[RMDB]
RNA sequence: GGGAACGACUCGAGUAGAGUCGAAAACGCCUAAACUCACGGUUACGUCCGUGGGCAUGGCAUAAAAACUAUUUGCACAUAGAGAUGGUCAUCCGUCUUGCUUCUGUGCAAAUAGUUACUGCCCGAACGAUCUAUAGCUGUUCGCAGCUAUAGAUCGAAAAGAAACAACAACAACAAC
Reactivity to 2A3 in 0.01 (KOAc 150mM, MgCl2 10mM, bicine 150mM(pH8.5), 24C), signal-to-noise 3, nucleotides 027 to 126: c070g030c010c000u050a100a060a020c010u000c010a000c010g040g080u040u300a110c150g120u090c020c000g000u030g000g000g000c010a050u070g010g000c010a000u170a030a120a010a000a000c000u000a010u000u000u000g030c000a000c000a010u110a020g020a010g000a010u000g010g040u180c060a210u190c050c000g000u000c000u020u070g050c010u110u080c050u040g000u000g010c000a000a010a000u000a000g000u000u000a020c030u060g010c020c000c010g010a080a040
Reactivity to DMS in 0.01 (KOAc 150mM, MgCl2 10mM, bicine 150mM(pH8.5), 24C), signal-to-noise 2, nucleotides 027 to 126: c260g010c000c000u000a020a110a130c020u000c000a020c000g000g010u000u030a130c220g000u000c000c010g090u000g000g000g030c010a300u010g020g000c010a040u000a040a060a060a050a020c010u000a000u000u000u000g000c040a020c060a020u000a110g020a010g000a000u000g000g050u000c300a120u000c040c000g000u000c010u010u000g020c100u000u010c280u010g000u000g040c000a000a010a000u000a000g000u020u000a010c170u000g000c000c000c000g000a120a160